[RMDB]
RNA sequence: GGGAACGACUCGAGUAGAGUCGAAAAGGAGUUAAGUUCGCUUAACUCCCACUACCGAGAAAGCGACUCGGUAUAUCGCAAUAACCCUUGGAAACAAGGGAACCACUGACGACUUCGGUCGUCAGAAUCAUAAACCUGUGUUCGCACAGGUUUAUGAAAAAGAAACAACAACAACAAC
Reactivity to DMS in 0.01 (KOAc 150mM, MgCl2 10mM, bicine 150mM(pH8.5), 24C), signal-to-noise 3, nucleotides 027 to 126: g000g000a030g000u000u010a010a000g040u000u020c230g000c000u010u000a010a010c000u000c010c010c050a040c140u000a010c000c010g010a020g000a060a140a090g030c300g000a070c000u010c000g000g020u000a020u010a020u020c110g000c120a100a090u010a120a080c010c000c000u000u000g010g010a190a120a180c000a010a020g000g000g000a030a020c180c120a200c010u000g000a010c010g000a010c000u000u010c210g030g030u000c010g010u000c000a020g010a040a100
Reactivity to 2A3 in 0.01 (KOAc 150mM, MgCl2 10mM, bicine 150mM(pH8.5), 24C), signal-to-noise 3, nucleotides 027 to 126: g000g000a000g010u010u000a010a000g000u030u090c130g020c110u000u010a000a000c020u000c000c000c000a060c010u010a000c000c010g000a010g030a040a160a020g270c110g090a060c000u000c010g000g000u000a020u020a020u010c030g000c060a040a100u140a180a230c000c000c010u000u020g040g010a080a040a020c000a000a000g000g010g050a010a030c020c010a060c030u000g000a010c000g000a000c010u040u080c230g130g000u010c000g000u000c000a000g010a000a030
An RNA of 177 nucleotides, treated with DMS and 2A3 and read out base by base. In probing experiments dimethyl sulfate is read out at A N1 and C N3, which are open when not base-paired. Source: RMDB library M2PK50, as collected in RNAgym. The RNA was probed in 150 mM KOAc, 10 mM MgCl2 and 150 mM bicine (pH 8.5) at 24 C.